Chemical mapping of a 177-nucleotide RNA with DMS and 2A3. It was measured as part of the RMDB library OK2TST.

[RMDB]
RNA sequence: GGGAACGACUCGAGUAGAGUCGAAAAUACGCCGAUUUGCUGGGACCCAAAAAGAUUGUCGUCUUCGGUUUAUGCGGCUGCUUUUUGAGCGGUCUGGGAUAUCUGACGGCAGGAUUAACCGCCAGUCGUAAUUACCACACUUCGGUGUGGUAAUUACAAAAGAAACAACAACAACAAC
Reactivity to DMS in 0.01 (KOAc 150mM, MgCl2 10mM, bicine 150mM(pH8.5), 24C), signal-to-noise 2, nucleotides 027 to 126: u010a110c140g000c110c040g000a090u000u010u000g000c020u000g030g000g010a110c030c010c030a020a050a080a070a040g010a140u030u000g010u000c030g000u010c040u000u000c180g000g020u010u000u010a060u010g010c060g020g000c000u000g010c000u000u000u010u010u030g000a050g030c010g020g010u000c000u010g020g000g000a100u000a000u010c040u000g000a030c020g010g020c010a050g010g010a230u000u000a080a100c090c040g000c020c020a060g010u010c200
Reactivity to 2A3 in 0.01 (KOAc 150mM, MgCl2 10mM, bicine 150mM(pH8.5), 24C), signal-to-noise 2, nucleotides 027 to 126: u110a020c020g010c000c020g100a130u100u080u160g020c050u040g030g000g070a100c010c000c000a000a070a020a000a000g070a060u030u010g020u000c020g010u000c020u110u070c090g090g090u080u090u100a060u170g160c040g030g040c020u020g010c000u150u090u050u200u300g110a020g050c020g010g010u000c030u060g040g030g060a010u030a060u130c030u090g000a020c020g000g030c000a010g020g020a040u170u070a080a050c000c040g030c050c000a000g080u060c040